This 207-nucleotide RNA was probed chemically with 2A3. The reactions ran in a buffer of 150 mM KOAc, 10 mM MgCl2 and 150 mM bicine (pH 8.5), at 24 C.
[RMDB]
RNA sequence: GGGAACGACUCGAGUAGAGUCGAAAACCCGCCCGUGGGGGAGAGUGUCCCGCGCUAUGGAUGCAGUUCAACGACUAAACGGUGAUGGGCUAGCGUAAUGAAUGCGUUCUGCACACUCUUACGCCGGCUUAAGAUAUAGUCUACUCCCACUCCGAAAGUGAGUGAUACAGUUCGCUGUAUCACUCACAAAAGAAACAACAACAACAAC
Reactivity to 2A3 in 0.01 (KOAc 150mM, MgCl2 10mM, bicine 150mM(pH8.5), 24C), signal-to-noise 2, nucleotides 027 to 156: c030c010c000g060c060c010c030g020u040g010g030g000g020g000a050g000a000g040u060g020u000c010c030c020g110c040g020c070u140a120u300g060g000a080u090g050c020a020g010u060u120c080a150a000c070g020a020c010u000a100a060a000c030g160g000u150g030a110u130g070g010g000c000u020a040g000c000g000u000a000a000u060g000a160a240u010g010c050g100u230u190c140u300g000c000a020c000a000c000u000c000u000u000a010c000g000c020c000g000g050c000u020u010a090a010g040a040u070a000u050a220g030u000c020u020a130c010u010c010c000c000a030c020u090c040c010g070a030a040a030